[RMDB]
RNA sequence: GGGAACGACUCGAGUAGAGUCGAAAAUUGGCGAAUGCCUGUGGAUCUACAUUUGUUGCGGGUUCGAGACCCGUCACAGCCCGGCUCUGUAGCUCAAUGGUAGAGCGGUGUAUUCACAUAAACUUGUAAAAGACACGUGCCUUCGGGCACGUGUCAACAAUUGUAGUAGCUUCGGCUACUACAAUUGAAAAGAAACAACAACAACAAC
Reactivity to DMS in 0.01 (KOAc 150mM, MgCl2 10mM, bicine 150mM(pH8.5), 24C), signal-to-noise 1, nucleotides 027 to 156: u000u010g020g000c000g030a040a050u000g000c010c020u000g030u010g020g030a100u000c020u010a030c010a030u000u000u000g030u000u010g060c000g020g000g020u000u000c100g020a290g030a080c010c020c000g000u000c070a080c050a090g060c070c000c020g040g020c000u000c050u000g000u010a200g010c030u000c070a110a050u010g030g000u000a080g000a030g050c010g000g050u000g010u000a090u000u000c060a050c040a050u000a090a030a090c080u000u000g000u010a070a040a100a150g000a000c000a100c000g020u000g040c000c000u000u000c300g010g000g050c000a000c000g030u010g010u000c000a010a050
Reactivity to 2A3 in 0.01 (KOAc 150mM, MgCl2 10mM, bicine 150mM(pH8.5), 24C), signal-to-noise 1, nucleotides 027 to 156: u140u050g010g000c050g070a300a040u240g000c010c020u000g020u050g000g000a020u020c030u090a020c020a090u080u080u140g020u010u020g000c000g000g000g010u030u090c070g030a040g070a120c020c020c000g000u000c040a000c020a000g030c000c000c090g080g030c010u000c010u040g130u020a040g050c030u000c180a100a160u170g070g020u080a030g000a000g020c040g040g000u050g000u010a070u000u080c030a000c000a020u200a100a050a100c080u030u110g040u220a070a000a080a020g020a010c000a000c000g000u000g000c000c000u000u130c170g000g010g000c000a000c020g000u000g010u000c000a000a010
This 207-nucleotide RNA was probed chemically with DMS and 2A3. Reactivities are given for positions 27 through 156. The DMS profile rests on 2,299 reads. The RNA was probed in 150 mM KOAc, 10 mM MgCl2 and 150 mM bicine (pH 8.5) at 24 C. It was measured as part of the RMDB library M2RFPK. For DMS the reverse transcriptase was MarathonRT. 2A3 adducts were read by reverse transcription with SuperScript II with manganese.